[RMDB]
This 177-nucleotide RNA was probed chemically with 2A3 and DMS. It was measured as part of the RMDB library OK2TST.
RNA sequence: GGGAACGACUCGAGUAGAGUCGAAAAUUUGAGCUGGAUCUCGCCGCCAACAACGGUACGCAACAUACGGUAUUUUCCGGGCCGGAAGCCCGUCUCGCGGUAUUUUGCACCACGCUCUCGCAGCAUAGCCUUAGUACCAGUUCGCUGGUACUAAGGCAAAAGAAACAACAACAACAAC
Reactivity to 2A3 in 0.01 (KOAc 150mM, MgCl2 10mM, bicine 150mM(pH8.5), 24C), signal-to-noise 1, nucleotides 027 to 126: u120u020u080g030a020g000c020u010g010g030a050u000c030u020c070g000c040c000g020c000c030a050a050c050a050a030c120g040g020u070a060c090g000c030a030a020c010a020u060a040c040g130g020u040a060u090u110u050u000c040c000g040g020g000c010c020g240g000a060a000g000c000c020c030g080u030c020u000c050g300c010g020g040u050a060u000u040u030u010g000c000a010c020c010a030c070g020c000u000c010u020c040g000c030a030g030c040a090u120a100
Reactivity to DMS in 0.01 (KOAc 150mM, MgCl2 10mM, bicine 150mM(pH8.5), 24C), signal-to-noise 2, nucleotides 027 to 126: u010u020u000g010a040g000c030u000g020g010a100u000c100u000c060g000c000c000g020c000c020a090a070c180a100a200c050g000g030u000a100c110g000c030a080a040c080a040u000a060c060g010g020u000a060u000u020u020u010c180c010g000g000g040c020c010g000g000a200a300g010c010c000c010g000u000c070u000c060g010c030g000g040u000a030u000u000u000u000g020c000a290c000c030a080c220g000c030u000c010u010c120g000c070a080g000c110a090u030a150
Conditions: 150 mM KOAc, 10 mM MgCl2 and 150 mM bicine (pH 8.5), 24 C.